[RMDB]
RNA sequence: GGGAACGACUCGAGUAGAGUCGAAAAUCAACAACAUAGGAAGAUCUUCACUCGAAAGUAGUAUUACGCGCAAAUGAGGAGUAAUUAUUGUUCGGUAUCAAAUGGAGAGAAAAAAAGCGCCCGCAGGCAAAUGGGUACUAUUCGUAGUACCCAUUUGAAAAGAAACAACAACAACAAC
Reactivity to 2A3 in 0.01 (KOAc 150mM, MgCl2 10mM, bicine 150mM(pH8.5), 24C), signal-to-noise 2, nucleotides 027 to 126: u110c010a000a130c000a020a010c000a110u190a060g070g040a050a080g030a080u020c010u050u030c060a020c060u020c020g040a080a010a000g060u090a020g050u040a090u050u110a020c040g020c030g030c070a020a100a120u150g020a140g060g020a050g030u080a040a080u050u170a050u060u050g020u060u040c050g010g020u040a070u110c040a040a080a100u060g050g010a020g000a020g030a100a190a000a010a000a030a050g040c080g000c000c000c020g020c020a010g040g040
Reactivity to DMS in 0.01 (KOAc 150mM, MgCl2 10mM, bicine 150mM(pH8.5), 24C), signal-to-noise 3, nucleotides 027 to 126: u040c040a070a190c100a070a090c160a090u020a090g010g000a100a120g000a060u000c010u000u020c050a070c040u010c050g020a080a090a110g010u000a050g010u010a030u030u020a040c060g010c020g020c120a080a060a090u010g020a060g020g000a100g010u010a060a060u030u010a070u000u010g000u010u000c020g000g030u020a050u030c060a030a090a060u020g010g020a080g000a060g000a000a030a100a130a090a280a300g000c300g000c020c030c030g000c180a110g000g000